[RMDB]
RNA sequence: GGGAACGACUCGAGUAGAGUCGAAAACAGUGUCGCUGGUGACUCAGAGAGGAAAGGAGAAAUCCAAACUCCUUUAGCCUUGUGCACAGAAACUGAAGUUUUAGAGGAAUAGUUGGGUAGGUUUUUUUAAUGGGCCAUUGGUUUUUCUCUCCUUGAGCCGAUAAUUAAGAUUCGUCUUAAUUAUCGGAAAAGAAACAACAACAACAAC
Reactivity to DMS in 0.01 (KOAc 150mM, MgCl2 10mM, bicine 150mM(pH8.5), 24C), signal-to-noise 2, nucleotides 027 to 156: c070a210g010u000g020u000c030g030c010u000g000g060u000g010a140c020u000c040a130g010a180g010a060g010g000a050a040a070g030g000a080g020a080a110a150u010c100c130a090a100a150c020u010c010c010u020u000u010a130g020c020c010u000u000g000u000g010c040a130c050a130g010a110a060a090c050u010g010a060a130g000u000u000u000u000a090g010a070g020g030a070a060u000a050g000u000u000g070g030g030u000a100g020g010u000u000u000u000u000u000u000a060a100u000g000g000g050c050c040a070u010u020g000g000u000u000u000u020u000c010u000c050u000c020c020u000u000g010a140g020
Reactivity to 2A3 in 0.01 (KOAc 150mM, MgCl2 10mM, bicine 150mM(pH8.5), 24C), signal-to-noise 2, nucleotides 027 to 156: c030a020g050u030g040u180c060g000c090u000g000g080u060g040a030c020u040c100a020g030a000g010a030g120g000a010a010a010g010g010a010g020a050a100a010u120c090c050a050a010a120c010u010c000c000u020u000u040a100g020c000c010u020u060g030u060g020c020a010c000a030g040a030a080a010c080u090g050a100a030g050u030u060u090u200a060g030a020g020g040a060a040u040a110g060u130u140g020g000g000u000a020g070g030u030u030u020u030u030u080u300a090a060u070g040g020g030c010c050a010u060u030g010g000u000u080u040u030u040c000u000c000u040c040c000u050u100g070a020g060